This 207-nucleotide RNA was probed chemically with 2A3 and DMS. Source: RMDB library OK3TST, as collected in RNAgym. For 2A3 the reverse transcriptase was SuperScript II with manganese. For DMS, 1,628 sequencing reads were counted.
RNA sequence: GGGAACGACUCGAGUAGAGUCGAAAAAACAGCGGUCGGAGGAUCCUGUUCUGCAUCGGCUGCUGAUCGCUCUGGAGAGAGAGCGUGCAGAGCUGGAGGAACUACGCGCGCUCGUGAUACGGCGAGAAGCUGAGGUGCGUGAGCUGGAGCGCCGACUAAUUAGAGACCUUUUCGAAGGUCUCUAAUUAAAAGAAACAACAACAACAAC
Reactivity to 2A3 in 0.01 (KOAc 150mM, MgCl2 10mM, bicine 150mM(pH8.5), 24C), signal-to-noise 3, nucleotides 027 to 156: a000a010c050a030g100c060g010g000u000c000g020g020a050g070g040a080u010c000c000u010g000u000u000c000u010g000c000a010u010c000g300g010c030u040g000c010u010g020a030u000c000g010c010u090c120u220g100g040a120g010a020g010a000g000a010g100c010g010u010g000c030a040g020a030g100c060u100g050g050a070g030g030a040a030c020u110a060c080g000c000g000c000g000c000u010c000g050u100g010a130u140a220c070g000g010c000g000a000g010a000a010g000c010u020g000a010g000g010u000g000c040g040u040g010a000g020c020u050g010g010a030g010c030g000c000c000g000a000c000u000
Reactivity to DMS in 0.01 (KOAc 150mM, MgCl2 10mM, bicine 150mM(pH8.5), 24C), signal-to-noise 1, nucleotides 027 to 156: a050a070c090a080g060c110g030g050u000c000g050g000a080g030g030a210u010c010c010u000g020u010u000c000u010g000c000a070u010c010g000g010c050u000g000c000u020g000a190u000c010g050c020u010c040u000g000g000a300g000a200g000a070g000a030g010c000g030u000g020c060a030g000a110g020c050u000g080g010a170g000g010a170a300c000u000a020c010g000c000g000c010g040c010u000c030g010u000g000a300u000a040c040g000g040c000g020a040g010a220a090g030c010u000g010a160g000g060u000g010c010g030u000g010a090g040c010u010g000g020a150g000c010g010c000c020g000a070c050u000